[RMDB]
Structure probing data (2A3) for a 207-nucleotide construct.
RNA sequence: GGGAACGACUCGAGUAGAGUCGAAAAGGGGGCGACCGGCUUCGACGCAGGUCGCGAAGCCUUCGGUGCAUGCAGAGCUGCGGUUCGCUCUUAAAACUGGUCGCAGAUUCAUAAUUGCCAACGACAGCAAUUACGCCCUCGCUGCUUAAGCAGUGAGCCUGGUGUUGUACUUCGGUACAACACCAGGAAAAGAAACAACAACAACAAC
Reactivity to 2A3 in 0.01 (KOAc 150mM, MgCl2 10mM, bicine 150mM(pH8.5), 24C), signal-to-noise 1, nucleotides 027 to 156: g000g000g000g000g000c000g020a000c020c000g050g020c000u100u190c020g180a160c030g010c090a080g060g070u090c000g000c000g000a000a000g040c040c000u000u070c050g070g000u040g080c080a050u090g000c040a060g000a000g010c000u030g000c010g040g020u050u070c020g000c000u000c020u020u160a040a030a030a010c010u000g100g000u080c000g000c050a010g040a110u260u210c030a010u070a080a000u050u040g010c020c040a120a150c130g110a100c050a000g000c000a020a000u060u030a080c090g010c070c010c000u000c020g000c000u010g020c010u300u200a300a050g000c000a000g000u000g020a010g000
2A3 adducts were read by reverse transcription with SuperScript II with manganese. 2A3 is a SHAPE reagent: it acylates the 2'-hydroxyl of flexible nucleotides of all four kinds. The reactions ran in a buffer of 150 mM KOAc, 10 mM MgCl2 and 150 mM bicine (pH 8.5), at 24 C.